[RMDB]
RNA sequence: GGGAACGACUCGAGUAGAGUCGAAAAAAGUCAUGAAAGUGGAAUCACAGUAAUAGGGAAGCCAGACUGGCAAGAUCGGACAUUGAGUGUGGAAGUGUAUUGUCACCAUCUUAACUUCAACUCUAGACGCAGUGAUCACUUUCGAGUGAUCACUGCGAAAAGAAACAACAACAACAAC
Reactivity to DMS in 0.01 (KOAc 150mM, MgCl2 10mM, bicine 150mM(pH8.5), 24C), signal-to-noise 1, nucleotides 027 to 126: a070a120g010u000c020a100u000g020a010a030a020g040u000g000g010a180a090u010c030a070c080a010g000u000a050a040u010a180g000g000g000a080a080g000c040c060a080g000a130c070u000g040g010c060a060a050g010a090u000c080g000g000a180c040a080u010u000g030a100g020u010g040u000g020g010a110a070g000u010g010u010a110u000u000g000u000c050a060c040c130a140u000c020u010u000a070a100c070u000u000c050a050a040c140u000c030u000a060g010a220